[RMDB]
RNA sequence: GGGAACGACUCGAGUAGAGUCGAAAAUGCCACUGGAUUCCGAUAAGGAUGCCACUGGUUCACAAGCGUGGGAUCCCGAGGGCAUUUUGAACCGCGGUGUGCGUGCGCUUCGUCAGGAGUUCGGUGAGACUCCCGAAGGAUUCGUCCUUCGGGAGUCAAAAGAAACAACAACAACAAC
Reactivity to 2A3 in 0.01 (KOAc 150mM, MgCl2 10mM, bicine 150mM(pH8.5), 24C), signal-to-noise 1, nucleotides 027 to 126: u070g000c050c010a040c020u010g000g000a000u090u030c050c010g060a090u130a300a120g120g000a030u050g000c000c000a090c140u220g020g010u170u100c070a040c040a080a170g090c020g070u090g010g100g000a070u020c070c020c020g080a180g030g060g000c070a050u090u090u000u110g040a030a000c000c020g000c080g000g080u110g020u060g040c030g000u020g010c110g000c010u010u000c040g060u080c080a020g050g020a030g060u000u020c000g000g040u050g000a090
Reactivity to DMS in 0.01 (KOAc 150mM, MgCl2 10mM, bicine 150mM(pH8.5), 24C), signal-to-noise 1, nucleotides 027 to 126: u010g000c080c010a080c050u010g010g000a080u000u000c000c020g030a210u020a120a130g020g000a050u040g020c000c020a050c040u000g010g000u000u000c090a020c150a100a160g020c020g020u000g010g010g010a030u000c010c030c040g010a160g000g030g010c000a050u020u010u020u000g020a060a130c060c020g040c090g010g010u000g000u000g020c040g020u000g010c100g010c020u000u000c020g000u000c090a070g000g000a050g000u000u000c020g000g030u000g010a200